An RNA of 177 nucleotides, treated with DMS and 2A3 and read out base by base. As a SHAPE reagent, 2A3 marks flexible, mostly unpaired nucleotides at the ribose 2'-OH. DMS adducts were read by reverse transcription with MarathonRT. The reactions ran in a buffer of 150 mM KOAc, 10 mM MgCl2 and 150 mM bicine (pH 8.5), at 24 C.
[RMDB]
RNA sequence: GGGAACGACUCGAGUAGAGUCGAAAAUUCACUUCAGAUCGUAUAAAUCUUUCGCCUUUUACUAAAGAUUUCCGUGGAGUGGAACAAUUAAGAGUUUUACUCAAUUUUUUGAUGCCCUGCGUCUGCGCUUUCAGACGUAGUUCGCUACGUCUGAAAGAAAAGAAACAACAACAACAAC
Reactivity to DMS in 0.01 (KOAc 150mM, MgCl2 10mM, bicine 150mM(pH8.5), 24C), signal-to-noise 3, nucleotides 027 to 126: u010u000c010a030c020u000u000c000a060g000a120u010c050g010u020a150u050a050a020a020u000c010u000u000u020c100g000c120c130u040u020u020u040a120c070u020a040a030a030g010a050u010u000u000c200c050g010u000g000g020a010g010u000g000g000a020a100c060a020a100u010u000a080a120g000a060g000u000u020u020u070a060c060u000c000a050a000u010u010u000u020u010u000g000a190u010g000c010c020c010u000g000c080g000u000c020u010g000c180g000
Reactivity to 2A3 in 0.01 (KOAc 150mM, MgCl2 10mM, bicine 150mM(pH8.5), 24C), signal-to-noise 8, nucleotides 027 to 126: u010u000c010a010c020u010u000c000a030g040a300u130c040g010u130a120u080a210a020a010u000c000u010u030u020c050g070c060c000u100u160u160u280a100c040u060a040a020a020g010a030u020u010u000c040c050g070u060g040g000a000g000u020g000g020a030a040c060a010a040u110u150a120a050g030a020g070u060u070u140u250a040c010u000c030a070a110u050u050u030u040u050u110g060a060u120g020c000c020c000u020g010c020g050u040c050u050g050c070g000